[RMDB]
RNA sequence: GGGAACGACUCGAGUAGAGUCGAAAAGCAACUGGACUUCCGCGGACAACUGGCGGUGCGCAGCCACCUGCUCAUGUGCGGGCAUUGCCGGCGCUUCAUCCGCCAGAUGCGCCUGACCCAGGCGACCGUUAGCCAAGGAGUUCGCUCCUUGGCUAACAAAAGAAACAACAACAACAAC
Reactivity to 2A3 in 0.01 (KOAc 150mM, MgCl2 10mM, bicine 150mM(pH8.5), 24C), signal-to-noise 3, nucleotides 027 to 126: g040c020a030a150c020u040g020g020a030c010u130u020c070c010g030c050g030g020a070c000a070a050c060u010g000g000c000g000g020u040g000c010g010c000a010g020c010c010a020c000c000u010g010c000u070c070a180u220g110u170g190c050g000g040g000c050a100u040u190g040c040c040g070g000c000g000c000u110u100c050a100u040c010c010g000c000c000a000g000a020u030g010c060g000c000c010u060g030a110c020c000c010a000g040g000c000g010a030c000c030
Reactivity to DMS in 0.01 (KOAc 150mM, MgCl2 10mM, bicine 150mM(pH8.5), 24C), signal-to-noise 3, nucleotides 027 to 126: g000c070a020a060c020u010g000g000a060c030u020u000c020c040g010c060g050g000a150c140a050a120c020u000g030g040c010g010g020u020g010c300g030c030a210g000c130c300a100c050c050u000g060c000u000c120a090u020g020u070g000c000g000g000g000c300a050u070u050g060c220c100g000g000c010g040c030u060u000c150a010u020c010c040g000c000c000a000g010a020u040g030c050g010c000c000u000g020a250c200c020c020a220g000g030c020g050a150c120c130
Chemical mapping of a 177-nucleotide RNA with 2A3 and DMS. The DMS profile rests on 2,283 reads. It was measured as part of the RMDB library RFM100. The RNA was probed in 150 mM KOAc, 10 mM MgCl2 and 150 mM bicine (pH 8.5) at 24 C.